[RMDB]
RNA sequence: GGGAACGACUCGAGUAGAGUCGAAAAGUGAAUCGAGAGAAAACUGGCUCUCCCUUAGCCAUCCGAGUGGACGUCUGUCCUCCUUCGGAUGCCCAGGUCGGACCGCGGGGAGGUGGAGAUGCCAUGCAUACAUUGAUCUUCGGAUCAAUGAAAAGAAACAACAACAACAAC
Reactivity to 2A3 in 0.01 (KOAc 150mM, MgCl2 10mM, bicine 150mM(pH8.5), 24C), signal-to-noise 9, nucleotides 027 to 129: g120u110g070a050a070u120c100g020a030g010a010g020a100a080a030a080c050u010g030g000c000u000c000u010c000c010c000u070u110a030g040c030c000a010u000c000c000g000a010g010u020g000g000a010c030g170u130c240u300g020u010c020c010u040c010c040u090u060c010g000g000a000u010g000c000c000c010a020g030g060u070c050g060g090a080c020c010g020c070g020g000g000g010a030g020g040u150g030g010a020g000a030u170g010c000c010a020u080g030c000a050u100a080
Reactivity to DMS in 0.01 (KOAc 150mM, MgCl2 10mM, bicine 150mM(pH8.5), 24C), signal-to-noise 9, nucleotides 027 to 129: g020u000g020a080a080u020c060g000a110g020a090g020a070a040a120a130c100u010g010g020c020u010c030u000c010c010c040u010u000a100g020c300c000a030u030c000c000g000a050g030u010g010g000a010c010g000u050c230u070g010u020c020c010u020c090c070u040u010c000g020g000a010u010g020c010c010c050a090g000g010u020c100g030g020a300c040c050g000c100g000g000g000g000a060g010g000u020g000g000a010g000a030u050g030c030c020a030u050g040c100a090u030a140